[RMDB]
RNA sequence: GGGAACGACUCGAGUAGAGUCGAAAAUCUGAUGCUGAUGGCCGUCUCACCUGUAAGACCACCAUGGGUAAUAAGACCUUUUUAACAGCCUUUACUGAUGGUGCCCAGCUGGAGGCCAAUGGGCCAGCUCCGAUCCUAGAUUCGUCUAGGAUCGGAGAAAAGAAACAACAACAACAAC
Reactivity to DMS in 0.01 (KOAc 150mM, MgCl2 10mM, bicine 150mM(pH8.5), 24C), signal-to-noise 2, nucleotides 027 to 126: u010c040u000g010a110u010g020c020u010g000a100u010g000g020c020c050g020u010c020u000c020a080c160c040u010g000u010a060a100g020a060c220c020a020c020c010a010u030g000g000g010u000a010a060u010a070a050g000a060c040c030u010u000u000u010u020a070a160c260a110g000c030c010u000u000u000a020c010u010g000a030u000g010g000u010g020c110c050c010a100g020c110u000g000g010a170g000g010c000c060a010a070u010g010g000g000c040c070a060g020
Reactivity to 2A3 in 0.01 (KOAc 150mM, MgCl2 10mM, bicine 150mM(pH8.5), 24C), signal-to-noise 2, nucleotides 027 to 126: u010c020u030g030a060u120g010c000u040g010a040u020g060g000c000c010g100u060c040u040c050a050c000c000u000g040u110a140a000g060a050c020c010a010c000c000a020u040g070g020g040u010a050a070u100a140a050g090a120c010c020u080u090u040u050u110a190a080c070a030g020c000c030u050u010u080a030c010u070g100a040u010g000g000u000g010c000c000c000a000g020c010u060g000g050a000g030g020c020c000a040a090u100g020g000g040c000c000a010g010